An RNA of 177 nucleotides, treated with DMS and 2A3 and read out base by base. The data come from the RNA Mapping Database (RMDB), library OK1LIB. Values are in units of 0.01, from 0 to 300, in steps of 10.

[RMDB]
RNA sequence: GGGAACGACUCGAGUAGAGUCGAAAAACUCAUUAAUAUCCACUGACGCCUCUCUUUUCUCUCUUCGUGUGCGGGAGGCACUGCCGUCAUACAGAGAGAAUCGCAACAUUGGAUAAGAGAAUGGAUCACCUUCCGUCUAGUUCGCUAGACGGAAGGUAAAAGAAACAACAACAACAAC
Reactivity to DMS in 0.01 (KOAc 150mM, MgCl2 10mM, bicine 150mM(pH8.5), 24C), signal-to-noise 1, nucleotides 027 to 126: a090c030u020c000a100u000u040a080a150u000a030u040c000c000a040c070u000g040a040c300g000c080c100u020c020u030c000u000u000u000u040c030u000c000u000c010u020u000c160g000u040g030u000g000c030g000g000g020a000g070g000c230a040c040u000g040c030c040g000u190c010a000u020a000c000a020g000a000g000a010g000a000a000u000c170g000c080a080a180c030a030u000u000g000g000a000u000a010a100g000a140g020a110a060u000g000g000a050u000c080
Reactivity to 2A3 in 0.01 (KOAc 150mM, MgCl2 10mM, bicine 150mM(pH8.5), 24C), signal-to-noise 4, nucleotides 027 to 126: a010c040u070c060a060u100u140a090a080u030a050u080c020c030a000c010u020g040a040c090g030c050c050u100c010u000c000u050u010u050u000c000u000c020u010c020u150u210c090g000u020g020u050g000c000g030g020g040a080g130g030c030a030c030u020g030c000c000g200u300c010a020u000a040c070a010g000a000g000a000g000a020a000u040c040g000c040a070a030c000a040u030u070g030g000a010u070a070a050g100a010g060a030a070u140g100g030a060u140c020